[RMDB]
The record gives the reactivity of an RNA of 177 nucleotides to DMS. Values cover nucleotides 27 to 126. DMS adducts were read by reverse transcription with MarathonRT.
RNA sequence: GGGAACGACUCGAGUAGAGUCGAAAAUGAACAUGUGGUGAUGAGCAACUUCUUUGUGGACUAGGGUUUCUGAUAACACUACGCAGUGUUUGAUGACCAAACCCUUUGGUUGUCUGAGCUCCUCUAAUCCAUCAGACAUCUUCGGAUGUCUGAUGGAAAAAGAAACAACAACAACAAC
Reactivity to DMS in 0.01 (KOAc 150mM, MgCl2 10mM, bicine 150mM(pH8.5), 24C), signal-to-noise 1, nucleotides 027 to 126: u000g000a130a060c110a110u010g100u000g010g000u000g010a050u000g000a040g010c030a150a120c090u000u020c040u000u010u000g010u010g010g000a030c090u000a040g000g010g000u000u000u000c020u000g010a130u000a000a040c000a000c030u000a110c300g000c110a000g040u000g040u000u000u000g040a140u010g020a250c300c150a020a040a040c010c050c010u000u000u000g020g010u000u000g010u010c000u000g010a190g010c080u010c090c050u000c060u020a100a110